[RMDB]
RNA sequence: GGGAACGACUCGAGUAGAGUCGAAAAUUCCAUUUGAGUAUCCUGAAAACGGGCUUUUCAGCAUGGAACGUAGAUAUUAAAUAGUAGGAGUGCAUAGUGGCCCGUAUAGCAGGCAUUAACAUUCCUGAAAACGUGAAAAGGUUCGCCUUUUCACGAACAUCUUAGGCAUCUUCGGAUGCCUAAGAUGAAAAGAAACAACAACAACAAC
Reactivity to 2A3 in 0.01 (KOAc 150mM, MgCl2 10mM, bicine 150mM(pH8.5), 24C), signal-to-noise 1, nucleotides 027 to 156: u060u000c010c000a010u140u090u060g010a000g020u120a060u070c010c010u020g000a050a020a020a010c010g000g020g010c000u060u040u010u150c100a030g000c030a020u020g070g050a090a040c060g070u130a040g060a170u060a040u290u130a050a120a150u070a070g080u030a060g030g050a080g000u010g030c010a040u020a070g060u040g040g000c010c020c000g010u010a000u000a080g020c000a000g000g000c020a000u000u000a000a010c000a020u030u140c000c000u000g010a120a000a000a000c040g000u000g000a000a000a010a010g010g000u020u030c190g180c000c010u000u000u020u000c000a000c000g030a000a000
Reactivity to DMS in 0.01 (KOAc 150mM, MgCl2 10mM, bicine 150mM(pH8.5), 24C), signal-to-noise 1, nucleotides 027 to 156: u020u010c030c010a210u000u000u010g000a170g070u010a110u010c020c000u000g010a120a110a160a090c000g060g000g030c060u000u000u000u010c050a240g030c070a000u000g010g020a080a070c040g010u000a120g020a170u000a160u000u000a060a070a100u000a100g000u000a040g030g000a170g020u010g020c020a040u000a170g020u000g030g020c010c000c000g030u010a030u000a110g010c060a000g000g020c030a030u000u000a060a070c060a120u010u000c010c010u000g000a030a070a100a160c010g040u010g000a020a010a030a000g030g000u010u010c300g030c000c000u000u000u000u000c010a010c010g060a020a090